Source: RMDB library TTRDES, as collected in RNAgym. Chemical mapping of a 177-nucleotide RNA with DMS.
[RMDB]
RNA sequence: GGGAACGACUCGAGUAGAGUCGAAAAAAGAUAUGGAGCCUGUGUAGCUCGUAAGCACACGUUGAAACAGCUUCGGAAACGAAGCUGUGGAGUGUGUAUCGAGCGCAGAUACAGGCUCCUAAGUCAACUUACGCAAAUUCUUCGGAAUUUGCGUAAGAAAAGAAACAACAACAACAAC
Reactivity to DMS in 0.01 (KOAc 150mM, MgCl2 10mM, bicine 150mM(pH8.5), 24C), signal-to-noise 1, nucleotides 027 to 126: a110a090g000a020u000a300u000g000g030a010g000c020c010u000g030u000g000u000a290g020c000u000c010g000u010a060a250g000c000a000c000a020c000g010u000u020g000a150a150a050c000a000g000c000u000u000c000g020g010a090a080a180c010g000a050a010g020c000u000g020u000g000g000a050g030u000g000u010g000u000a060u010c010g000a020g000c010g010c170a090g010a050u000a010c000a000g010g010c000u000c000c000u000a000a070g000u000c010a210a200
For DMS the reverse transcriptase was MarathonRT. The DMS profile rests on 962 reads. The RNA was probed in 150 mM KOAc, 10 mM MgCl2 and 150 mM bicine (pH 8.5) at 24 C.